The record gives the reactivity of an RNA of 177 nucleotides to DMS and 2A3. The DMS profile rests on 26,784 reads. Conditions: 150 mM KOAc, 10 mM MgCl2 and 150 mM bicine (pH 8.5), 24 C. Values cover nucleotides 27 to 126. The data come from the RNA Mapping Database (RMDB), library OK1LIB.

RNA sequence: GGGAACGACUCGAGUAGAGUCGAAAAAUCACGAGAUGACAGUCGAACAAGACACCGGCGCUGGUAAUUGUUCGUAUCGCCAGCACAGUGUGUCUUAUGCGUCACUCUGUAUAGUGGCGGAUACAGAGUUACUACUUAAUUUCGAUUAAGUAGUAACAAAAGAAACAACAACAACAAC
Reactivity to DMS in 0.01 (KOAc 150mM, MgCl2 10mM, bicine 150mM(pH8.5), 24C), signal-to-noise 8, nucleotides 027 to 126: a080u020c040a140c080g010a050g000a090u010g010a060c100a080g010u020c060g000a120a110c140a030a000g000a010c010a010c010c000g000g010c120g000c000u010g010g010u000a100a100u010u020g020u020u030c230g010u010a030u020c090g000c000c000a000g010c010a040c040a060g030u050g010u010g000u000c000u010u000a030u010g010c040g010u000c010a060c030u000c080u020g000u020a030u030a040g000u020g010g010c070g000g010a040u010a040c150a050g010a160
Reactivity to 2A3 in 0.01 (KOAc 150mM, MgCl2 10mM, bicine 150mM(pH8.5), 24C), signal-to-noise 9, nucleotides 027 to 126: a010u110c050a020c090g110a090g030a110u110g050a050c040a040g070u060c030g040a080a060c040a060a020g010a010c000a010c010c020g080g010c090g000c030u020g010g020u070a140a130u110u150g120u260u160c090g040u120a070u080c040g000c010c000a000g090c020a020c030a040g080u110g000u000g010u180c000u010u030a040u060g030c020g010u000c000a010c010u030c040u050g080u090a110u050a100g060u040g010g010c010g000g010a020u050a080c050a010g080a000